[RMDB]
RNA sequence: GGGAACGACUCGAGUAGAGUCGAAAAGAUAUGGACGUAUCCGUAGAUUAAUAUAGGUCGUCGGAAACGACGACUAUAAAGCUUAUUACGGAGUACGUCCUAAGUCAAAAGCUCAGUUCGCUGAGCAGCCUAACCUUAUGUUCGCAUAAGGUUAGGCAAAAGAAACAACAACAACAAC
Reactivity to 2A3 in 0.01 (KOAc 150mM, MgCl2 10mM, bicine 150mM(pH8.5), 24C), signal-to-noise 4, nucleotides 027 to 126: g020a010u030a000u040g000g000a000c010g010u000a020u010c000c010g010u020a090g060a300u140u300a300a300u130a050u040a150g180g220u060c010g020u010c010g000g010a020a040a000c010g000a000c030g020a000c010u000a000u010a010a020a000g020c010u170u260a090u300u050a300c010g040g000a080g120u080a000c010g010u000c000c000u000a000a000g040u000c020a000a000a300a000g000c010u000c000a000g030u140u080c180g060c210u000g000a020g000c000a020
Reactivity to DMS in 0.01 (KOAc 150mM, MgCl2 10mM, bicine 150mM(pH8.5), 24C), signal-to-noise 2, nucleotides 027 to 126: g000a010u000a230u020g000g010a040c010g030u000a020u000c000c000g040u000a010g020a160u000u010a080a240u000a020u000a050g000g000u000c000g000u000c010g010g010a010a070a070c020g020a020c010g030a030c010u010a000u010a010a090a110g010c270u000u000a080u010u000a010c000g000g000a030g020u000a000c000g020u000c000c000u000a000a090g000u010c020a090a110a120a100g010c000u000c000a000g000u000u000c290g030c000u000g000a000g000c000a110